RNA sequence: GGGAACGACUCGAGUAGAGUCGAAAAGCCGCGGUGGGCUCCGGACGCGACGAUCGCCUCGAUGCGCGCCCGGAUUUGCCCAUUGUGUAACCGCGGGUCGCGCUUGCGGGACGCGAUGGCGGCGCGGGCUACGCGUACAGUUCGCUGUACGCGUAGCAAAAGAAACAACAACAACAAC
Reactivity to DMS in 0.01 (KOAc 150mM, MgCl2 10mM, bicine 150mM(pH8.5), 24C), signal-to-noise 2, nucleotides 027 to 126: g000c040c000g060c010g000g020u000g020g010g030c010u000c000c010g000g010a020c000g000c000g010a120c050g000a040u010c170g000c250c130u000c030g000a050u000g000c010g020c010g000c010c010c000g000g000a040u000u010u000g010c010c000c010a040u000u010g010u000g000u010a180a130c040c000g000c010g020g020g010u000c080g020c030g010c090u010u000g030c090g000g000g020a180c040g000c000g020a060u000g000g020c020g000g010c000g020c070g020g020
Reactivity to 2A3 in 0.01 (KOAc 150mM, MgCl2 10mM, bicine 150mM(pH8.5), 24C), signal-to-noise 1, nucleotides 027 to 126: g070c000c010g000c030g020g000u060g000g000g000c000u020c000c000g000g000a010c010g070c010g010a150c050g070a060u060c030g060c160c080u090c110g030a050u140g050c000g010c000g040c000c000c030g000g010a040u070u050u090g000c000c000c000a020u020u040g000u010g070u080a100a070c010c010g010c040g030g030g040u020c010g000c000g020c040u080u140g060c070g030g000g120a070c030g000c000g070a060u080g050g000c000g050g000c040g000c020g030g060
This 177-nucleotide RNA was probed chemically with DMS and 2A3. The reactions ran in a buffer of 150 mM KOAc, 10 mM MgCl2 and 150 mM bicine (pH 8.5), at 24 C.